The record gives the reactivity of an RNA of 177 nucleotides to DMS and 2A3.
RNA sequence: GGGAACGACUCGAGUAGAGUCGAAAAUGGGCUCAGUCUGUUCCACCUCCCCUCAGACUAGCCUAGAUCAAAGGCAGGGUUCUCUGCAUACUAGUAUGGUGGGUCAAGAAAUCAGCGCCAACAUGGGACCGAAGGGAACUUUCGAGUUCCCUUCGGUAAAAGAAACAACAACAACAAC
Reactivity to DMS in 0.01 (KOAc 150mM, MgCl2 10mM, bicine 150mM(pH8.5), 24C), signal-to-noise 3, nucleotides 027 to 126: u030g020g010g000c000u000c260a030g000u000c000u020g000u010u030c090c050a140c080c050u010c030c000c020c050u020c020a040g000a020c000u000a020g000c000c000u000a050g020a110u030c130a110a140a100g000g000c010a060g000g000g010u020u040c030u030c000u000g010c010a060u010a030c050u000a060g020u020a040u000g000g000u000g000g000g010u000c080a070a150g000a060a110a100u020c060a090g000c070g000c010c020a080a080c090a050u020g020g010g000
Reactivity to 2A3 in 0.01 (KOAc 150mM, MgCl2 10mM, bicine 150mM(pH8.5), 24C), signal-to-noise 3, nucleotides 027 to 126: u090g050g000g020c000u010c020a000g060u000c000u060g070u110u120c020c030a100c010c000u080c020c000c020c000u040c000a020g020a030c010u000a000g000c000c000u040a040g020a090u100c100a040a020a060g060g000c010a020g080g030g050u200u010c050u020c000u000g000c010a010u030a030c020u030a030g150u020a170u160g020g010u040g000g060g020u020c030a060a050g080a130a050a040u090c010a090g010c000g000c010c000a000a060c010a160u140g020g040g090

The 2A3 profile rests on 1,636 reads. 2A3 adducts were read by reverse transcription with SuperScript II with manganese. Reactivities are given for positions 27 through 126. The RNA was probed in 150 mM KOAc, 10 mM MgCl2 and 150 mM bicine (pH 8.5) at 24 C. Source: RMDB library RFM100, as collected in RNAgym.